RNA sequence: GGGAACGACUCGAGUAGAGUCGAAAAAUUUUAGGGUCUACUACUGGAGGACUAGUCUUAAGACAGUGGGACAAAAGUUCUUGCGAUUUUCACCCCUUAAUCAAUAUGCCCAUGUUGACUACCUAUGUGUAAGGCAGUCGAGAGAAGCAGAGAAGAACAUGGGGUAAUACUUCGGUAUUACCCCAUGAAAAGAAACAACAACAACAAC
Reactivity to 2A3 in 0.01 (KOAc 150mM, MgCl2 10mM, bicine 150mM(pH8.5), 24C), signal-to-noise 2, nucleotides 027 to 156: a000u150u170u150u120a050g030g010g000u030c020u040a090c010u030a030c010u090g060g030a010g000g020a040c030u040a040g000u020c010u040u090a090a050g060a080c060a060g090u070g030g030g020a000c030a020a170a010a010g010u010u010c010u020u050g160c090g100a200u100u020u060u160c030a040c000c000c010c000u080u120a030a010u100c060a050a020u040a060u190g000c000c000c010a000u040g070u070u030g030a000c000u020a030c020c000u040a110u130g120u060g030u130a020a030g000g030c000a010g040u020c080g000a000g010a000g000a070a020g000c040a000g030a010g020a200a000g010a030a000
Reactivity to DMS in 0.01 (KOAc 150mM, MgCl2 10mM, bicine 150mM(pH8.5), 24C), signal-to-noise 2, nucleotides 027 to 156: a100u000u000u010u000a100g010g010g030u020c000u000a070c050u010a040c070u000g000g040a080g020g010a040c040u000a150g030u000c040u000u000a150a200g000a060c100a130g030u000g040g000g010a130c060a060a060a080a230g000u000u000c000u000u000g000c030g000a180u000u000u000u000c040a110c050c010c020c020u000u020a050a120u010c080a010a190u000a100u000g000c010c020c010a290u010g000u000u010g000a030c020u010a060c020c000u010a070u010g000u000g000u000a120a100g020g060c020a010g020u000c030g020a090g000a090g020a100a150g020c000a060g000a140g020a060a050g000a070a180